[RMDB]
RNA sequence: GGGAACGACUCGAGUAGAGUCGAAAAGCCUCCUUCGGGAGGCCCGUUGUCCUAAGUCUACUUCCUUGAAGCCCACGAGGCGACGAUCUAUCGGAAACGAUAGGGAGCCUCAGUGGGUGGAGAAGUAGAUAUGGAAGGGGUAAGGUUUCGACCUUAACACUUGACAUUGUUUCGACAAUGUCAAGUGAAAAGAAACAACAACAACAAC
Reactivity to DMS in 0.01 (KOAc 150mM, MgCl2 10mM, bicine 150mM(pH8.5), 24C), signal-to-noise 1, nucleotides 027 to 156: g020c000c000u000c000c000u000u020c300g060g020g000a070g090g010c000c000c010g030u000u010g000u000c010c000u020a140a300g000u010c010u000a030c000u000u000c010c210u000u000g000a240a300g010c000c000c000a000c030g000a000g000g010c050g020a050c170g010a060u010c010u010a030u000c000g020g000a170a080a240c000g000a040u010a030g010g000g000a080g000c030c000u000c020a010g080u010g000g060g010u000g000g020a040g030a020a050g010u020a040g030a010u010a080u000g010g000a100a060g000g030g030g010u010a080a070g010g020u000u000u010c150g010a100c010c000u000u000a040a270
Reactivity to 2A3 in 0.01 (KOAc 150mM, MgCl2 10mM, bicine 150mM(pH8.5), 24C), signal-to-noise 3, nucleotides 027 to 156: g000c000c000u000c010c000u040u120c230g110g010g010a000g010g010c010c000c000g050u050u140g100u000c010c020u060a170a020g020u000c000u000a000c000u010u020c030c020u110u070g040a070a000g010c000c000c000a010c000g000a000g000g000c000g020a080c010g010a010u000c000u000a000u000c000g050g020a120a060a060c010g000a000u000a000g000g000g000a000g000c010c010u020c150a030g000u000g000g000g000u020g000g000a070g000a000a010g000u000a000g000a000u020a030u050g020g020a020a040g060g000g000g030u060a020a030g040g020u000u060u090c130g050a080c010c000u010u090a110a010